The record gives the reactivity of an RNA of 177 nucleotides to DMS and 2A3. Source: RMDB library OK2TRN, as collected in RNAgym. Reactivities are given for positions 27 through 126.

RNA sequence: GGGAACGACUCGAGUAGAGUCGAAAAUGCUCCACCAAGUCUACAUUCCAUGCCGUCCCGGUCCAUAUUUGGGACCGGCUUAUGCUUUUUGGUGCCACCUUGGACGACCAGGCCUUUUGCUGCUCGCCUUUGGUACUCCAUUCGUGGAGUACCAAAGAAAAGAAACAACAACAACAAC
Reactivity to DMS in 0.01 (KOAc 150mM, MgCl2 10mM, bicine 150mM(pH8.5), 24C), signal-to-noise 3, nucleotides 027 to 126: u000g010c060u000c020c040a070c040c030a090a100g000u000c040u010a110c120a100u000u000c030c040a070u000g010c040c070g000u010c120c030c010g010g010u010c020c020a080u000a140u010u000u020g040g020g010a010c040c000g020g010c140u010u000a050u000g010c040u020u000u000u000u010g010g020u000g010c040c030a050c110c070u000u000g000g000a070c060g020a050c050c030a070g010g000c050c060u010u000u000u000g010c050u000g010c060u000c040g010c140
Reactivity to 2A3 in 0.01 (KOAc 150mM, MgCl2 10mM, bicine 150mM(pH8.5), 24C), signal-to-noise 3, nucleotides 027 to 126: u100g020c000u000c010c010a030c000c020a040a010g080u000c040u090a050c020a090u140u030c030c000a040u060g050c030c000g070u080c020c020c000g030g000u000c020c010a100u120a210u250u300u220g090g000g000a010c000c020g000g000c000u050u030a030u050g040c040u080u080u090u110u110g040g020u050g040c020c010a030c000c020u020u070g010g010a040c030g020a030c010c040a000g040g120c000c000u060u090u050u110g000c030u030g020c010u020c020g030c010